Record summary: This 177-nucleotide RNA was probed chemically with 2A3 and DMS. Reactivities are rounded to 0.1 and cut off at 0 and 3. It was measured as part of the RMDB library OK2TRN.

RNA sequence: GGGAACGACUCGAGUAGAGUCGAAAAUAUCAAUGGCCUGUGACAGUCCGGUUGUACGAGUUUGGUCGGACUUGACGAAGCGCAGUACUACGCGAUUAUGUAAGAGGUACCUUUUCACUACGUUCAGCCUUACCCAAUGGUUCGCCAUUGGGUAAGGAAAAGAAACAACAACAACAAC
Reactivity to 2A3 in 0.01 (KOAc 150mM, MgCl2 10mM, bicine 150mM(pH8.5), 24C), signal-to-noise 2, nucleotides 027 to 126: u170a060u100c050a000a110u060g050g000c010c010u070g080u090g090a030c020a000g050u000c020c000g000g000u030u070g040u040a070c040g010a070g050u000u060u120g100g000u050c000g000g090a130c050u050u140g040a030c020g060a040a000g030c010g000c080a010g000u000a050c020u020a010c050g010c010g030a020u130u030a090u180g090u040a060a010g040a030g090g000u080a100c010c000u050u020u060u090c090a110c120u180a070c090g100u040u070c010a000g020
Reactivity to DMS in 0.01 (KOAc 150mM, MgCl2 10mM, bicine 150mM(pH8.5), 24C), signal-to-noise 3, nucleotides 027 to 126: u010a100u010c110a080a140u000g000g010c080c030u020g010u000g010a110c120a080g000u000c030c010g000g030u010u000g000u000a090c060g000a110g000u000u000u010g010g040u000c050g000g010a080c160u000u000g000a060c020g010a090a040g020c030g000c070a150g010u020a030c010u000a050c060g010c120g000a030u020u000a060u000g010u000a030a070g010a080g010g000u000a070c060c010u000u010u000u000c060a100c100u000a090c160g000u000u000c090a140g010
The reactions ran in a buffer of 150 mM KOAc, 10 mM MgCl2 and 150 mM bicine (pH 8.5), at 24 C.
The 2A3 profile rests on 1,829 reads.
DMS adducts were read by reverse transcription with MarathonRT.